RNA sequence: GGGAACGACUCGAGUAGAGUCGAAAAUGUGUGGGUGUCCCUGGAGGAGAUGGUGUUCCGGGAGGCGGGGACGGUGCCUCCACAGAGGCCCAAAGGCCACAUCAGCGCUCAGUAAGGCCAGGAGAAGGAUGAGAAGCAUAUUCGUAUGCUUCUCAUCAAAAGAAACAACAACAACAAC
Reactivity to DMS in 0.01 (KOAc 150mM, MgCl2 10mM, bicine 150mM(pH8.5), 24C), signal-to-noise 6, nucleotides 027 to 126: u000g020u000g010u000g020g000g010u000g010u010c020c030c020u010g010g010a150g010g010a130g010a100u000g010g010u000g000u010u000c060c040g000g010g000a080g020g000c050g000g010g000g010a060c110g000g020u010g010c020c010u000c030c100a100c210a110g010a090g000g020c010c020c040a050a120a210g010g010c010c020a070c110a050u010c090a090g010c150g030c020u000c030a070g010u010a080a260g010g010c020c030a100g000g000a120g020a140a130g000
Reactivity to 2A3 in 0.01 (KOAc 150mM, MgCl2 10mM, bicine 150mM(pH8.5), 24C), signal-to-noise 3, nucleotides 027 to 126: u110g020u010g020u080g010g020g020u110g040u060c000c000c010u020g040g030a090g040g020a080g020a050u130g030g070u090g070u150u070c050c010g000g030g000a040g030g050c040g000g010g000g000a020c000g010g030u070g010c010c010u010c020c000a020c010a020g090a060g010g010c020c010c000a030a060a030g040g000c020c010a070c010a120u140c040a020g060c030g020c120u010c040a020g020u040a060a020g000g000c020c010a010g020g040a080g000a100a030g130
Source: RMDB library OK2TST, as collected in RNAgym. Chemical mapping of a 177-nucleotide RNA with DMS and 2A3. The DMS profile rests on 7,925 reads. Values are in units of 0.01, from 0 to 300, in steps of 10. 2A3 adducts were read by reverse transcription with SuperScript II with manganese. DMS adducts were read by reverse transcription with MarathonRT.